Conditions: 150 mM KOAc, 10 mM MgCl2 and 150 mM bicine (pH 8.5), 24 C. Structure probing data (DMS and 2A3) for a 170-nucleotide construct.

RNA sequence: GGGAACGACUCGAGUAGAGUCGAAAAAAAGAAAGCCACGGGGCUAGCGAGUGGAUGUUCCGCCCCAAGGGGAGCCGAGUGAGGCUUAUCCCGGGGAACUCGGUAAUUCGCCCCGAAAUGAGGACUCAAACAUUGCGGUUCGCCGCAAUGAAAAGAAACAACAACAACAAC
Reactivity to DMS in 0.01 (KOAc 150mM, MgCl2 10mM, bicine 150mM(pH8.5), 24C), signal-to-noise 6, nucleotides 027 to 129: a030a030a050g030a110a140a050g040c000c070a130c010g020g010g020g030c020u020a010g000c050g020a040g010u010g000g040a090u020g030u030u020c040c040g000c050c020c000c000a050a120g000g000g000g000a000g030c000c000g000a180g040u030g030a220g010g050c000u000u000a060u050c000c000c020g000g020g010g030a140a020c030u020c040g000g000u040a030a140u010u020c230g050c070c010c010c010g030a030a020a080u060g010a130g000g000a090c070u040c060a130a090a160
Reactivity to 2A3 in 0.01 (KOAc 150mM, MgCl2 10mM, bicine 150mM(pH8.5), 24C), signal-to-noise 5, nucleotides 027 to 129: a000a000a000g190a000a060a010g060c010c000a040c030g000g000g000g000c000u040a030g080c010g000a000g010u050g040g090a070u200g090u180u020c020c010g030c020c000c010c010a130a150g000g000g000g000a000g000c000c020g060a090g180u300g080a020g020g000c000u000u020a070u090c000c000c000g010g000g030g000a010a000c010u000c000g000g000u030a060a110u130u150c050g000c000c000c010c000g000a020a010a020u150g010a030g050g020a020c020u010c030a030a040a040